Record summary:
Structure probing data (2A3 and DMS) for a 177-nucleotide construct. It was measured as part of the RMDB library OK2TRN. Reactivities are given for positions 27 through 126. DMS adducts were read by reverse transcription with MarathonRT.
RNA sequence: GGGAACGACUCGAGUAGAGUCGAAAAGAAGCCAGUUAACGCGGCACGUUCACGCGGGGAUUCCAGCGUCUCGAUGGUGGCCGACGUGGCGUUAUCCUCCCCGGCCAGCAGGGUGGCUAUUUCGGCCGCCUUACAGAAACUUCGGUUUCUGUAAGGCAAAAGAAACAACAACAACAAC
Reactivity to 2A3 in 0.01 (KOAc 150mM, MgCl2 10mM, bicine 150mM(pH8.5), 24C), signal-to-noise 2, nucleotides 027 to 126: g110a080a000g030c020c040a020g060u050u130a110a050c000g030c030g130g000c040a010c040g050u100u110c040a010c070g040c010g000g000g040g060a180u280u150c040c010a040g040c020g050u010c040u030c070g090a080u140g140g240u070g060g090c000c030g050a080c020g020u040g040g010c010g020u050u100a020u030c000c020u030c000c010c010c010g030g000c040c020a030g030c020a040g060g060g070u000g000g000c020u050a070u030u150u050c040g000g000c000c010
Reactivity to DMS in 0.01 (KOAc 150mM, MgCl2 10mM, bicine 150mM(pH8.5), 24C), signal-to-noise 2, nucleotides 027 to 126: g000a120a110g030c020c010a150g010u010u010a100a130c050g030c060g010g040c040a070c050g010u000u000c090a050c010g030c030g000g000g010g000a160u020u010c030c030a080g000c040g000u010c080u020c100g010a060u000g020g010u000g010g020c030c020g020a040c050g020u000g010g000c030g010u000u000a080u000c040c050u000c010c000c030c040g000g010c030c020a110g000c080a040g010g010g030u000g000g000c010u000a080u000u000u010c080g000g040c060c050